RNA sequence: GGGAACGACUCGAGUAGAGUCGAAAAAUGCACGUUCGCGUGCAUAGUUUUUCCUAAGUCGACAUGUAUUUGAUUAGCGUUGAAACCGUUCGGAAACGAACGGUGGAGCUAUAGAAUACAACAGCGAUAUGGAUGAUAGCGGGAGUUCGCUCCCGAAAUGUGGAUAAAAAUUCGUUUUUAUCCACAUAAAAGAAACAACAACAACAAC
Reactivity to 2A3 in 0.01 (KOAc 150mM, MgCl2 10mM, bicine 150mM(pH8.5), 24C), signal-to-noise 7, nucleotides 027 to 156: a000u010g000c010a010c010g030u060u080c270g020c010g110u010g000c000a000u010a000g000u000u160u030u050u030c030c010u070a150a050g030u000c010g010a190c050a100u040g010u020a010u000u000u030g100a150u110u030a010g010c040g160u180u030g010a010a010a000c000c000g000u010u000c020g010g050a100a100a110c010g000a000a010c000g000g000u000g010g000a010g000c000u000a000u000a020g000a010a000u000a010c020a030a010c050a040g010c010g010a020u020a050u160g110g020a050u080g070a100u200a100g080c020g010g010g000a020g010u140u150c200g050c130u000c000c000c000g000a000a020
Reactivity to DMS in 0.01 (KOAc 150mM, MgCl2 10mM, bicine 150mM(pH8.5), 24C), signal-to-noise 5, nucleotides 027 to 156: a040u000g010c000a010c000g030u000u000c300g050c040g050u000g000c010a010u000a020g010u000u000u000u020u010c020c000u010a060a270g020u000c010g010a050c080a300u000g020u000a010u000u000u000g000a300u010u000a020g000c010g020u000u020g010a200a170a080c000c000g010u000u000c000g010g010a190a120a260c000g010a020a000c010g000g010u000g000g010a140g010c010u000a020u000a230g000a020a030u000a010c000a020a090c090a190g020c010g010a070u000a290u000g010g000a100u000g010a140u000a110g010c050g010g010g000a060g000u000u000c120g040c000u000c010c000c000g000a000a050
An RNA of 207 nucleotides, treated with 2A3 and DMS and read out base by base. Conditions: 150 mM KOAc, 10 mM MgCl2 and 150 mM bicine (pH 8.5), 24 C. Values are in units of 0.01, from 0 to 300, in steps of 10. DMS adducts were read by reverse transcription with MarathonRT. The 2A3 profile rests on 8,239 reads. It was measured as part of the RMDB library RNAMAK.